[RMDB]
RNA sequence: GGGAACGACUCGAGUAGAGUCGAAAAGAUAUGGAGCUGUCUUAAUGGAGGGUUUGUGUCGGAAACGACAUUAACCCUAUGAAGUUAAGAGCAGCUCCUAAGUCAAACGGCUGCUUCGGCAGCCGAAGAUAGUAAAUUUGUUCGCAAAUUUACUAUCAAAAGAAACAACAACAACAAC
Reactivity to 2A3 in 0.01 (KOAc 150mM, MgCl2 10mM, bicine 150mM(pH8.5), 24C), signal-to-noise 2, nucleotides 027 to 126: g010a030u090a040u160g000g000a020g010c000u020g020u070c000u040u020a020a020u050g030g030a010g020g030g000u010u030u020g000u020g000u010c010g020g020a100a080a080c010g000a000c010a000u020u010a010a000c020c000c000u020a100u010g010a010a030g000u020u000a010a010g050a080g040c010a000g000c000u000c000c010u010a000a000g000u000c010a080a040a070c010g000g030c020u010g010c000u110u070c300g180g000c000a010g000c000c000g000a000a000
Reactivity to DMS in 0.01 (KOAc 150mM, MgCl2 10mM, bicine 150mM(pH8.5), 24C), signal-to-noise 3, nucleotides 027 to 126: g010a050u000a300u000g010g000a010g050c000u000g010u000c000u000u000a000a010u000g020g010a010g010g010g000u000u000u000g030u000g000u000c000g000g000a140a100a190c000g010a010c000a000u000u000a000a000c000c000c000u000a070u010g000a110a260g000u000u000a000a010g000a110g020c000a000g000c000u000c010c010u000a010a080g000u010c020a120a170a300c060g000g000c010u010g000c010u000u000c230g040g000c000a030g000c000c000g020a010a040